RNA sequence: GGGAACGACUCGAGUAGAGUCGAAAAGCACUGGAAGUGAGAAUUGGAGGAAAACAAACUGAUUGCUGGUUGUUGUUUGCAACAGUGUGGCAAACAAUGUUCAGCUUGUUUUUCUCCAAUAUCUCACCUUCAGGUUAAACGCCCGUUCGCGGGCGAACAAACAACUCAGUUUCGACUGAGUUGUUUGAAAAGAAACAACAACAACAAC
Reactivity to DMS in 0.01 (KOAc 150mM, MgCl2 10mM, bicine 150mM(pH8.5), 24C), signal-to-noise 1, nucleotides 027 to 156: g000c020a010c010u000g020g020a030a060g000u000g000a050g030a090a110u000u000g000g010a050g040g000a030a020a020a020c010a010a050a030c050u020g000a060u000u000g030c140u000g050g010u000u020g030u000u000g020u000u000u000g010c000a090a090c030a280g020u000g000u020g000g020c040a040a000a030c000a020a020u000g020u000u000c000a030g020c010u010u020g010u010u000u030u000u000c000u030c020c020a010a000u000a080u000c000u010c010a020c010c000u000u000c000a070g010g020u010u000a040a150a240c020g030c000c000c030g030u000u010c230g030c060g070g050g060c000g000a030a150
Reactivity to 2A3 in 0.01 (KOAc 150mM, MgCl2 10mM, bicine 150mM(pH8.5), 24C), signal-to-noise 3, nucleotides 027 to 156: g050c030a020c070u010g000g000a020a010g000u000g000a000g000a000a000u000u000g000g000a000g000g030a000a000a000a000c000a020a040a040c110u170g050a180u160u150g030c050u030g010g050u050u050g000u000u010g010u020u020u020g020c050a100a100c020a110g190u140g010u080g300g000c010a010a000a010c000a000a000u030g020u080u010c010a000g000c030u000u010g000u000u000u000u000u000c000u010c000c000a000a000u000a010u000c000u000c000a000c000c000u000u000c000a000g000g000u010u030a090a210a010c010g000c000c030c040g020u050u030c240g000c050g070g020g030c000g010a030a010